Structure probing data (2A3 and DMS) for a 177-nucleotide construct.
Values cover nucleotides 27 to 126.
For DMS the reverse transcriptase was MarathonRT.
DMS (dimethyl sulfate) methylates the pairing face of unpaired adenines and cytosines.
The reactions ran in a buffer of 150 mM KOAc, 10 mM MgCl2 and 150 mM bicine (pH 8.5), at 24 C.
The data come from the RNA Mapping Database (RMDB), library OK2TRN.
For 2A3 the reverse transcriptase was SuperScript II with manganese.
RNA sequence: GGGAACGACUCGAGUAGAGUCGAAAAAGUUUACCACUAGACUCAAAGCAAUUUCUUGAUUUUCCUCUAAUACUAGCAGCACUAGAGGGCAUGACUAGUACCAAAUAACAGAAGUUACUCUUCUGUAGGAUGUGCAAUGAUUCGUCAUUGCACAUCCAAAAGAAACAACAACAACAAC
Reactivity to 2A3 in 0.01 (KOAc 150mM, MgCl2 10mM, bicine 150mM(pH8.5), 24C), signal-to-noise 1, nucleotides 027 to 126: a000g020u030u070u010a160c050c050a000c040u020a050g040a080c040u010c110a140a130a050g000c040a060a110u020u150u000c010u070u040g030a070u090u010u100u000c010c030u060c030u100a150a130u000a200c010u010a000g000c000a000g030c010a010c040u000a040g030a110g110g000g030c010a100u050g040a120c000u000a010g010u000a030c020c030a120a110a110u140a110a020c030a000g010a010a000g000u070u120a100c110u070c000u210u050c010u000g010u020a020
Reactivity to DMS in 0.01 (KOAc 150mM, MgCl2 10mM, bicine 150mM(pH8.5), 24C), signal-to-noise 1, nucleotides 027 to 126: a110g010u000u000u000a130c080c000a190c100u000a080g020a160c090u000c180a030a070a140g020c100a120a070u000u000u000c080u000u010g000a120u010u000u000u000c000c000u000c130u000a040a160u000a000c000u000a050g010c060a070g040c020a080c050u000a050g010a170g050g000g010c080a040u000g000a040c000u000a000g000u010a120c170c080a090a010a180u000a100a090c030a020g020a000a020g000u000u010a150c260u020c020u000u000c000u000g010u000a030